[RMDB]
RNA sequence: GGGAACGACUCGAGUAGAGUCGAAAAUGCGAGUGAAUGGUAAGCGCGAGAAAUGAUGAUACAAGUUGAAAAGACAUAAUUUGAGAUUUUUCAAAAUAGAUUAUUUUAGACAUCCUACUUUAAUCAUUCAAAUAUCACUUUUCGAAGUGAUAUUUGAAAAAGAAACAACAACAACAAC
Reactivity to DMS in 0.01 (KOAc 150mM, MgCl2 10mM, bicine 150mM(pH8.5), 24C), signal-to-noise 3, nucleotides 027 to 126: u000g010c050g020a020g010u000g000a070a040u020g010g020u010a040a120g040c060g000c010g000a140g000a040a050a040u030g000a030u020g020a110u010a080c200a160a080g020u000u010g020a040a040a030a070g000a080c050a070u030a110a130u000u020u000g000a140g010a150u010u010u000u010u000c000a040a010a050a120u020a070g000a020u000u000a040u010u000u010u020a110g000a190c100a060u030c080c010u000a080c080u020u000u010a100a060u010c050a100u000
Reactivity to 2A3 in 0.01 (KOAc 150mM, MgCl2 10mM, bicine 150mM(pH8.5), 24C), signal-to-noise 4, nucleotides 027 to 126: u070g000c020g010a020g040u100g050a050a110u100g100g000u120a110a030g010c010g000c020g020a050g090a050a120a050u140g060a040u070g010a000u030a190c040a180a060g030u020u050g120a050a060a020a010g080a010c010a050u200a110a160u190u090u100g060a080g020a030u050u050u060u050u070c010a010a040a050a100u070a040g010a010u010u060a020u040u120u010u020a020g000a010c060a050u110c010c040u010a030c010u090u050u140a050a040u040c020a040u030